[RMDB]
RNA sequence: GGGAACGACUCGAGUAGAGUCGAAAAUUUUUUAGUAGAGACAGGGUUUCACCAUGUUGGCCAGGCUAGUCUCGAACUCUUGACCUUAAGCGAUCGCCUGCCUCGGUCUCCCAAAGUUCUGGGAUUAAACGAGGUUUUAAUUCGUUAAAACCUCGUUAAAAGAAACAACAACAACAAC
Reactivity to DMS in 0.01 (KOAc 150mM, MgCl2 10mM, bicine 150mM(pH8.5), 24C), signal-to-noise 3, nucleotides 027 to 126: u000u010u070u060u010u010a130g000u030a100g000a080g010a070c030a110g040g000g000u000u010u040c050a140c030c060a100u010g000u000u010g000g000c030c070a080g030g000c070u020a090g030u000c020u020c020g000a060a050c070u010c030u020u000g000a160c050c020u000u020a070a080g000c050g000a060u000c060g010c110c030u010g020c040c030u000c100g010g000u010c040u000c000c000c030a030a050a090g010u020u020c070u000g000g010g010a110u040u000a070
Reactivity to 2A3 in 0.01 (KOAc 150mM, MgCl2 10mM, bicine 150mM(pH8.5), 24C), signal-to-noise 2, nucleotides 027 to 126: u100u060u030u000u020u070a060g030u020a010g000a000g010a010c020a040g000g000g070u100u150u090c030a060c080c020a040u080g080u140u160g060g000c000c010a040g050g000c010u030a050g000u070c000u000c010g020a020a020c010u020c010u050u070g100a130c000c030u070u080a110a000g020c000g060a040u060c030g020c020c000u020g000c010c010u020c070g000g040u000c010u010c010c000c000a090a030a000g050u180u050c040u070g050g020g100a100u040u170a060